[RMDB]
Chemical mapping of a 207-nucleotide RNA with 2A3. For 2A3 the reverse transcriptase was SuperScript II with manganese. For 2A3, 1,203 sequencing reads were counted. Values cover nucleotides 27 to 156. The data come from the RNA Mapping Database (RMDB), library RNAMAK.
RNA sequence: GGGAACGACUCGAGUAGAGUCGAAAAGGGGUCGAUCCGGGAGGACUCUUCUAAGCUUGGAUUUAUAGGCUGAAGCCUCCACGGCCUAUUGUCAGCUUAGAGAAGUCCUUUGAUCGGAUCGACGGAGGCACCCAAAAGAUCAAGUUCGCUUGAUCAACACGCUCCGUACCUUCGGGUACGGAGCGUGAAAAGAAACAACAACAACAAC
Reactivity to 2A3 in 0.01 (KOAc 150mM, MgCl2 10mM, bicine 150mM(pH8.5), 24C), signal-to-noise 1, nucleotides 027 to 156: g090g010g060g000u000c000g000a010u030c000c020g010g000g000a000g010g010a000c000u030c070u130u050c020u010a000a000g000c030u190u300g120g020a050u180u220u050a030u000a000g000g010c000u010g020a050a010g010c010c000u010c010c000a000c000g030g000c010c010u000a000u020u040g010u100c130a030g010c000u000u000a000g000a010g020a030a000g020u000c020c020u000u260u010g000a000u000c000g000g000a000u000c000g000a000c010g010g000a000g010g020c020a030c020c000c000a000a140a010a040g010a000u000c000a010a000g040u140u190c170g070c170u000u000g000a000u020c000a000a040